[RMDB]
RNA sequence: GGGAACGACUCGAGUAGAGUCGAAAAGUCGCCGCGGAUCACUGGCGUCCAGCGGAGAAACAGGAGCUCGACUCCUUCCUUUCGCUGCUGGCUCCACAUCCGAUCGUCGCUGAGGCCUGCGCGCCCCGGCAUCUUUAUAGUUCGCUAUAAAGAUGCCAAAAGAAACAACAACAACAAC
Reactivity to DMS in 0.01 (KOAc 150mM, MgCl2 10mM, bicine 150mM(pH8.5), 24C), signal-to-noise 2, nucleotides 027 to 126: g010u000c020g010c020c030g000c020g010g010a020u000c010a040c080u000g010g000c060g000u020c010c000a010g000c010g030g010a050g000a000a010a020c230a010g020g010a010g010c060u000c300g010a160c000u000c000c000u000u020c040c020u000u000u000c000g020c010u000g010c000u000g000g020c000u000c000c000a020c120a010u000c000c010g000a050u000c040g010u000c010g000c030u000g000a110g000g010c030c010u000g020c190g020c090g000c010c010c010c100
Reactivity to 2A3 in 0.01 (KOAc 150mM, MgCl2 10mM, bicine 150mM(pH8.5), 24C), signal-to-noise 2, nucleotides 027 to 126: g060u070c000g020c020c000g000c010g000g000a010u010c010a010c060u000g000g000c020g090u060c020c020a000g010c000g020g030a020g020a030a030a120c300a090g020g020a000g010c060u170c300g300a300c200u020c020c000u000u030c000c000u000u010u030c000g020c030u000g000c010u000g010g010c000u000c000c010a030c020a020u000c010c030g030a300u080c010g040u030c000g020c020u040g040a030g030g000c010c060u140g090c080g020c030g020c030c010c000c010
Background
The data come from the RNA Mapping Database (RMDB), library VIROID. Chemical mapping of a 177-nucleotide RNA with DMS and 2A3. The DMS profile rests on 2,648 reads. In probing experiments dimethyl sulfate is read out at A N1 and C N3, which are open when not base-paired. For DMS the reverse transcriptase was MarathonRT. For 2A3 the reverse transcriptase was SuperScript II with manganese.